[RMDB]
RNA sequence: GGGAACGACUCGAGUAGAGUCGAAAAUCUGGAAAUCACCCUCAGUCUGGGACUUAAGGAACAGGUCUAGUUUAUCUUAAGGGAACUGAAAGAUAUGGAAUGCUCAUCCUGUGUUCCCUGGGUCUCCUCUAGGUUCCUUUGUGGAGCAGGAAGAGGAACCUGCUAUUACCUUCGGGUAAUAGCAGGUAAAAGAAACAACAACAACAAC
Reactivity to DMS in 0.01 (KOAc 150mM, MgCl2 10mM, bicine 150mM(pH8.5), 24C), signal-to-noise 1, nucleotides 027 to 156: u000c010u000g000g010a040a130a180u020c030a170c070c000c000u000c030a160g030u000c030u000g000g000g040a130c040u000u000a040a120g020g010a030a040c050a070g010g010u000c010u000a110g030u000u010u020a020u030c040u000u020a190a060g020g000g020a060a110c010u000g010a110a110a100g000a050u000a080u000g030g010a080a080u000g010c030u000c010a180u000c040c000u000g000u010g010u000u000c020c000c000u000g000g030g050u010c000u000c000c000u000c000u000a160g040g010u000u000c000c000u010u030u000g030u010g010g000a080g020c030a180g010g010a110a070g010a080g100g000a070
Reactivity to 2A3 in 0.01 (KOAc 150mM, MgCl2 10mM, bicine 150mM(pH8.5), 24C), signal-to-noise 2, nucleotides 027 to 156: u020c020u060g030g140a100a030a000u150c020a120c000c030c000u000c000a030g050u050c060u090g040g000g030a030c000u100u030a070a040g000g030a010a030c010a040g040g060u070c060u070a040g080u060u070u090a060u000c030u060u100a030a030g020g010g050a070a080c010u020g060a210a010a040g070a020u090a020u140g060g060a090a090u260g050c010u050c020a060u010c040c010u100g010u010g030u150u020c000c000c020u000g020g000g010u010c000u000c020c000u020c000u020a090g040g030u050u080c020c060u070u070u130g160u120g060g030a000g020c000a010g040g070a120a080g000a050g030g010a000
Annotation: The record gives the reactivity of an RNA of 207 nucleotides to DMS and 2A3. The 2A3 profile rests on 665 reads. It was measured as part of the RMDB library OK3TST. 2A3 is a SHAPE reagent: it acylates the 2'-hydroxyl of flexible nucleotides of all four kinds. 2A3 adducts were read by reverse transcription with SuperScript II with manganese. The reactions ran in a buffer of 150 mM KOAc, 10 mM MgCl2 and 150 mM bicine (pH 8.5), at 24 C. DMS adducts were read by reverse transcription with MarathonRT. The DMS profile rests on 2,045 reads.